[RMDB]
RNA sequence: GGGAACGACUCGAGUAGAGUCGAAAAAAUGGAAAAUCCUUGCUGCUGGAUCCUCCCAGUAAUAUCCGCGAUUACCCUAAAUGUAAAACUGUUCAUCAUAUUCAAGGUCAAAACCCUCAUGCACAGGCGUAGUACGGUACUUCGGUACCGUACUACGAAAAGAAACAACAACAACAAC
Reactivity to DMS in 0.01 (KOAc 150mM, MgCl2 10mM, bicine 150mM(pH8.5), 24C), signal-to-noise 2, nucleotides 027 to 126: a010a040u050g000g010a090a080a050a030u020c000c020u000u000g020c050u010g040c000u000g010g000a090u000c000c000u010c010c000c010a050g000u000a080a130u000a040u000c040c030g010c040g000a040u000u010a110c080c010c000u070a010a020a170u060g010u000a060a030a090a080c110u000g000u000u020c050a000u000c070a110u010a090u000u040c100a080a090g000g000u000c070a030a190a120a060c170c010c000u000c090a010u000g000c030a020c130a080g010g000
Reactivity to 2A3 in 0.01 (KOAc 150mM, MgCl2 10mM, bicine 150mM(pH8.5), 24C), signal-to-noise 2, nucleotides 027 to 126: a000a000u190g000g000a120a160a000a070u060c030c000u000u060g050c010u020g000c010u000g030g010a040u010c000c000u040c000c000c000a000g030u020a000a030u070a060u130c010c050g040c000g020a000u000u110a080c000c000c000u020a060a070a100u080g070u140a040a040a050a100c000u060g050u110u050c000a060u010c040a040u060a100u040u120c070a080a030g060g030u000c000a040a010a060a110c000c000c000u020c000a000u000g000c060a000c050a100g110g010